[RMDB]
RNA sequence: GGGAACGACUCGAGUAGAGUCGAAAAGAUAUGGACGUGAACAGGACAUGAAAGACUAUCGGAAACGAUAGCUUUCAACAGCCUGAGCACGUCCUAAGUCAAACCUAGCUUCUUCGGAAGCUAGGAACAGUUAGAACGAGUUCGCUCGUUCUAACUGAAAAGAAACAACAACAACAAC
Reactivity to DMS in 0.01 (KOAc 150mM, MgCl2 10mM, bicine 150mM(pH8.5), 24C), signal-to-noise 5, nucleotides 027 to 126: g010a040u000a300u020g020g000a010c000g020u000g000a040a050c000a020g010g000a090c120a260u000g010a010a010a010g000a170c000u000a000u000c010g000g000a110a100a170c000g010a010u000a000g020c000u000u000u000c000a020a090c300a160g000c010c000u000g010a080g010c010a010c000g010u000c000c000u000a010a050g010u010c050a180a100a210c000c000u000a010g000c000u000u000c000u000u020c250g030g000a010a000g000c010u000a010g000g010a030a050
Reactivity to 2A3 in 0.01 (KOAc 150mM, MgCl2 10mM, bicine 150mM(pH8.5), 24C), signal-to-noise 3, nucleotides 027 to 126: g020a000u050a030u110g000g000a000c010g000u010g010a040a010c010a010g000g060a060c100a300u230g070a030a000a000g140a280c000u010a000u000c000g040g000a070a020a020c010g000a000u000a000g000c000u030u000u000c010a030a030c070a050g200c000c000u000g000a010g000c000a000c000g000u000c000c000u000a000a000g010u010c040a070a020a070c000c000u000a000g000c000u020u010c020u030u040c170g170g010a020a000g000c000u000a000g000g000a010a020
Background:
An RNA of 177 nucleotides, treated with DMS and 2A3 and read out base by base. It was measured as part of the RMDB library TTRDES.